The record gives the reactivity of an RNA of 177 nucleotides to DMS and 2A3. It was measured as part of the RMDB library M2PK50. The reactions ran in a buffer of 150 mM KOAc, 10 mM MgCl2 and 150 mM bicine (pH 8.5), at 24 C.
RNA sequence: GGGAACGACUCGAGUAGAGUCGAAAACUAUCCGUCUUCGGACGGAUAGAAAGAAUAAAACAGCCAAUAAUACGGGUAAAAGGCUCAAAAUACCCGAAUAAAAAACAAAGCAGUUCGCUGCUUUGAACUAAUCUUCAUAGUUCGCUAUGAAGAUUAGAAAAGAAACAACAACAACAAC
Reactivity to DMS in 0.01 (KOAc 150mM, MgCl2 10mM, bicine 150mM(pH8.5), 24C), signal-to-noise 2, nucleotides 027 to 126: c000u000a010u000c000c000g010u000c000u010u010c170g010g020a010c000g000g000a020u000a000g000a050a060a120g010a110a130u010a030a050a110a160c130a100g010c000c010a120a090u030a170a110u010a130c020g000g000g000u000a030a110a080a120g000g000c020u000c190a020a030a060a080u000a050c020c000c000g040a120a070u010a000a080a050a130a050a100c000a010a000a000g000c000a020g020u000u020c240g030c000u000g000c000u000u000u000g000a090a120
Reactivity to 2A3 in 0.01 (KOAc 150mM, MgCl2 10mM, bicine 150mM(pH8.5), 24C), signal-to-noise 3, nucleotides 027 to 126: c000u000a010u010c010c000g010u000c010u010u040c120g130g000a000c000g020g010a000u000a010g000a000a020a010g020a050a050u210a100a100a010a050c060a010g000c000c050a030a010u130a100a050u150a100c020g000g000g010u030a050a030a110a160g050g000c040u050c210a150a170a020a020u030a050c000c010c010g010a010a020u080a030a100a010a000a000a000c010a000a000a000g000c000a000g020u040u110c170g050c100u000g010c000u010u000u000g000a000a010